[RMDB]
RNA sequence: GGGAACGACUCGAGUAGAGUCGAAAAGAUGUCAAUGAAGAGUAUACAGAAGCAGCUGCAGCAACUUGUGCGCUGGUGGCAGACUGUGCAUCAACAGUUACAAAUGAGUUCUGUGCAGAUCAUCCGUUCAUCUAUGUGAUUAGGCAUGUCGAUGGCAUGCCUGCCUUCAGUUCGCUGAAGGCAGGCAAAAAGAAACAACAACAACAAC
Reactivity to 2A3 in 0.01 (KOAc 150mM, MgCl2 10mM, bicine 150mM(pH8.5), 24C), signal-to-noise 2, nucleotides 027 to 156: g080a050u130g010u060c040a070a080u190g040a050a060g090a030g080u160a090u060a180c090a080g040a050a000g000c050a030g000c010u040g010c000a030g000c000a050a080c120u120u150g030u080g070c000g000c010u080g030g060u080g010g050c020a010g010a030c010u040g000u030g060c000a150u130c040a050a060c000a020g070u100u090a070c070a130a040a050u160g030a070g070u070u020c020u000g040u080g010c020a000g000a080u040c000a040u000c040c040g130u090u080c030a040u000c020u030a050u160g080u020g040a080u080u040a060g010g010c020a010u040g020u000c050g000a000u040g030g000c000a020
Reactivity to DMS in 0.01 (KOAc 150mM, MgCl2 10mM, bicine 150mM(pH8.5), 24C), signal-to-noise 1, nucleotides 027 to 156: g030a050u000g000u000c030a060a070u000g000a080a150g010a130g050u000a130u000a170c010a060g000a140a130g080c020a090g000c000u000g000c030a130g000c020a040a070c040u000u010g010u030g040c060g010c070u000g040g030u010g000g050c090a090g000a060c040u000g000u020g020c070a090u000c060a090a000c030a070g010u000u010a130c030a030a050a070u020g000a120g010u000u000c050u300g020u000g020c060a090g030a070u000c030a060u000c040c030g070u000u010c000a040u000c080u030a070u020g020u000g010a110u000u000a120g020g000c010a030u000g010u000c010g000a210u020g000g120c040a020
The record gives the reactivity of an RNA of 207 nucleotides to 2A3 and DMS. For 2A3 the reverse transcriptase was SuperScript II with manganese. For DMS, 1,921 sequencing reads were counted. The reactions ran in a buffer of 150 mM KOAc, 10 mM MgCl2 and 150 mM bicine (pH 8.5), at 24 C. Source: RMDB library OK3TST, as collected in RNAgym.